Description:
This 177-nucleotide RNA was probed chemically with DMS and 2A3. 2A3 adducts were read by reverse transcription with SuperScript II with manganese. For DMS, 6,324 sequencing reads were counted. The reactions ran in a buffer of 150 mM KOAc, 10 mM MgCl2 and 150 mM bicine (pH 8.5), at 24 C. For DMS the reverse transcriptase was MarathonRT. In probing experiments dimethyl sulfate is read out at A N1 and C N3, which are open when not base-paired.
RNA sequence: GGGAACGACUCGAGUAGAGUCGAAAAGCAGCUGGCAGAGCAGGUGAUGGAGAACGACACGUCUAGCUACAUCUUCCAGCAGAGCAAGGAGGUACUCGCCUCCAUCAUCGAGACGCGCAACGACAUCCAGUAAUAUGGGCUUCGGCCCAUAUUACUGAAAAGAAACAACAACAACAAC
Reactivity to DMS in 0.01 (KOAc 150mM, MgCl2 10mM, bicine 150mM(pH8.5), 24C), signal-to-noise 5, nucleotides 027 to 126: g050c100a080g000c050u000g010g000c020a060g010a110g000c050a170g020g010u030g010a010u000g000g000a010g010a080a190c070g010a040c170a060c030g000u010c010u000a160g000c030u010a080c080a090u030c110u000u020c080c060a050g000c140a100g000a080g010c000a190a120g000g000a030g000g030u010a060c250u010c040g000c180c000u000c030c010a010u020c030a010u000c020g020a170g000a040c080g000c030g000c080a030a040c060g020a160c230a090u030c070
Reactivity to 2A3 in 0.01 (KOAc 150mM, MgCl2 10mM, bicine 150mM(pH8.5), 24C), signal-to-noise 8, nucleotides 027 to 126: g070c050a010g000c030u070g060g000c030a050g030a020g080c040a030g020g020u010g010a040u020g010g010a030g020a100a020c040g040a010c010a010c100g240u030c030u040a020g030c000u080a090c030a170u050c040u200u070c060c060a050g030c070a030g040a010g030c030a080a130g060g010a020g010g030u060a060c020u030c050g010c000c010u010c010c000a010u010c000a010u010c010g070a070g010a040c030g010c010g000c040a060a050c030g090a020c010a100u080c040